[RMDB]
RNA sequence: GGGAACGACUCGAGUAGAGUCGAAAAUUGCGGAAGAAAGGUGACCUGAACCACUCGAGGUCGCCGUUGUCGAGUGCUCGCCGAAGAGGGUGGCCCGCAUCGGUGAGAUCGUUUUCCCGCGCGACCGGUGCGUGGGAAAGCACCGGGAAGAAAGGCAUCGUGUUACAGAUUUCGAUCUGUAACACGAAAAAGAAACAACAACAACAAC
Reactivity to DMS in 0.01 (KOAc 150mM, MgCl2 10mM, bicine 150mM(pH8.5), 24C), signal-to-noise 1, nucleotides 027 to 156: u000u000g010c010g030g000a050a140g020a020a030a070g050g020u000g010a120c010c010u000g010a070a110c020c020a070c060u000c060g010a140g010g000u000c000g000c020c000g030u000u000g000u000c010g070a150g060u010g010c040u000c030g070c000c020g000a050a110g030a130g000g000g000u000g010g010c040c020c010g030c070a140u010c000g010g030u000g000a090g000a050u000c050g050u000u000u010u000c000c010c010g030c000g000c090g020a210c070c080g040g000u000g000c000g010u010g000g020g000a030a020a070g000c040a050c040c000g000g010g000a100a090g000a130a100a070g000g010c070a250
Reactivity to 2A3 in 0.01 (KOAc 150mM, MgCl2 10mM, bicine 150mM(pH8.5), 24C), signal-to-noise 2, nucleotides 027 to 156: u120u130g030c050g020g010a070a030g040a140a130a040g030g000u010g000a020c020c090u100g040a090a070c040c130a060c110u040c090g060a030g000g040u020c050g010c110c060g000u050u070g010u050c060g030a080g060u140g070c010u000c050g010c010c020g040a120a030g060a080g070g030g060u110g050g030c030c020c000g030c000a040u030c010g030g000u020g010a020g000a040u050c020g010u030u000u040u020c010c000c000g010c030g010c020g050a060c010c020g020g020u010g010c010g000u100g000g080g000a010a030a000g000c000a020c000c010g010g000g020a040a040g050a020a030a060g060g010c020a020
Conditions: 150 mM KOAc, 10 mM MgCl2 and 150 mM bicine (pH 8.5), 24 C. An RNA of 207 nucleotides, treated with DMS and 2A3 and read out base by base. Reactivities are given for positions 27 through 156. DMS (dimethyl sulfate) methylates the pairing face of unpaired adenines and cytosines.